RNA sequence: GGGAACGACUCGAGUAGAGUCGAAAAUCCGUGGCUUCUCAGCCGCCGGUCAAGUAUGAGCCAAACCCGGUCUAUGAGGGCGUGCGCACUGCGCGGCUGCGCAUGGAGGAGAGCGGGUCCGGCCUCCUCCGAUGCCUAGUUUCGACUAGGCAUCGGAAAAAGAAACAACAACAACAAC
Reactivity to 2A3 in 0.01 (KOAc 150mM, MgCl2 10mM, bicine 150mM(pH8.5), 24C), signal-to-noise 2, nucleotides 027 to 126: u000c020c010g020u020g030g000c070u110u020c100u100c100a020g030c010c020g000c040c050g070g010u060c030a100a100g010u040a250u260g040a010g110c010c010a050a060a090c000c000c050g020g170u030c070u080a300u120g060a110g060g000g070c030g000u050g000c030g000c010a040c090u190g030c070g000c050g130g000c030u010g000c000g030c020a020u050g110g090a010g000g060a030g000a010g060c040g000g080g010u040c040c080g040g010c020c010u000c000c010
Reactivity to DMS in 0.01 (KOAc 150mM, MgCl2 10mM, bicine 150mM(pH8.5), 24C), signal-to-noise 3, nucleotides 027 to 126: u010c020c010g020u010g000g020c030u020u000c120u010c090a130g000c080c090g010c010c020g000g000u010c130a100a080g030u000a080u000g010a120g010c060c060a040a130a130c040c020c000g020g010u000c050u010a150u000g000a080g010g010g010c050g010u010g000c010g010c030a030c090u000g000c090g010c030g000g020c190u000g010c050g000c030a040u000g010g000a040g010g000a020g010a200g020c030g000g000g010u010c060c070g000g000c020c030u000c020c060
Chemical mapping of a 177-nucleotide RNA with 2A3 and DMS. For DMS the reverse transcriptase was MarathonRT. The DMS profile rests on 2,393 reads. The reactions ran in a buffer of 150 mM KOAc, 10 mM MgCl2 and 150 mM bicine (pH 8.5), at 24 C.